[RMDB]
The record gives the reactivity of an RNA of 177 nucleotides to DMS and 2A3.
Source: RMDB library OK2TRN, as collected in RNAgym.
2A3 adducts were read by reverse transcription with SuperScript II with manganese.

RNA sequence: GGGAACGACUCGAGUAGAGUCGAAAAGCCAAAGGGGAAACCAAUUGAGUCCACUUUGGACAUAAGAUUAAAGUGCAAUUGGUAAGAGUUCCUGUUUUGAGGGCCUUCUUCUGCAUUUCAAUAAUCACUAGACGCUAUCAUUCGUGAUAGCGUCUAGAAAAGAAACAACAACAACAAC
Reactivity to DMS in 0.01 (KOAc 150mM, MgCl2 10mM, bicine 150mM(pH8.5), 24C), signal-to-noise 1, nucleotides 027 to 126: g020c010c000a020a020a020g020g010g000g000a030a080a070c080c170a130a090u000u010g000a180g000u010c140c000a040c050u000u000u000g000g010a050c120a110u000a070a110g000a040u000u000a030a040a030g020u000g000c010a030a040u000u000g010g000u010a040a070g000a100g040u020u020c000c010u000g020u000u000u010u000g010a040g030g010g000c080c030u000u000c020u010u000c060u000g020c030a030u000u000u000c120a040a180u000a030a130u000c040a220
Reactivity to 2A3 in 0.01 (KOAc 150mM, MgCl2 10mM, bicine 150mM(pH8.5), 24C), signal-to-noise 1, nucleotides 027 to 126: g080c000c000a010a050a000g040g000g000g030a020a080a090c060c050a030a090u120u060g110a060g130u000c000c000a000c000u050u050u030g010g000a030c020a090u200a050a060g080a020u030u020a100a020a000g030u010g060c020a050a060u060u090g060g100u280a030a040g040a010g040u140u260c000c020u000g060u030u260u070u250g100a010g000g000g000c000c000u040u000c010u020u040c020u020g000c000a000u070u040u160c040a060a020u150a070a000u160c060a000

Notes:
DMS adducts were read by reverse transcription with MarathonRT. The 2A3 profile rests on 778 reads.